The record gives the reactivity of an RNA of 177 nucleotides to DMS and 2A3. The data come from the RNA Mapping Database (RMDB), library RFMREP. The RNA was probed in 150 mM KOAc, 10 mM MgCl2 and 150 mM bicine (pH 8.5) at 24 C. Values cover nucleotides 27 to 126.
RNA sequence: GGGAACGACUCGAGUAGAGUCGAAAAGCCGUAAACUAUGCCAACUGGGUGUUACGUAGUGGUACCCACGAGAAAUCAAGUAUAUGGGCUAUGGGGAUAGUACGAUCGCAAGAUUGAAACUUGAAGACAGUUACAUCUACUUCGGUAGAUGUAACUGAAAAGAAACAACAACAACAAC
Reactivity to DMS in 0.01 (KOAc 150mM, MgCl2 10mM, bicine 150mM(pH8.5), 24C), signal-to-noise 4, nucleotides 027 to 126: g000c020c010g040u000a020a080a100c030u000a040u000g010c070c030a050a270c300u000g000g000g010u010g020u000u000a030c030g040u020a060g040u000g010g000u000a030c020c010c000a030c060g000a280g020a060a060a060u000c080a020a060g000u000a070u000a030u000g010g010g020c030u000a070u010g000g000g000g000a100u000a040g010u000a110c050g000a020u000c030g010c220a070a080g000a030u000u010g010a050a110a060c070u000u010g000a130a080g010a190
Reactivity to 2A3 in 0.01 (KOAc 150mM, MgCl2 10mM, bicine 150mM(pH8.5), 24C), signal-to-noise 2, nucleotides 027 to 126: g050c010c000g010u050a070a090a000c040u040a040u190g000c050c020a040a030c080u060g040g000g040u020g050u000u030a090c130g130u180a050g040u050g010g030u030a040c000c010c010a020c070g040a060g020a040a050a030u100c030a020a020g040u030a030u010a050u220g100g000g000c010u010a050u070g100g000g000g020a000u010a040g030u030a000c040g010a030u000c020g000c050a020a060g020a040u010u060g010a140a100a040c030u000u070g050a070a000g070a060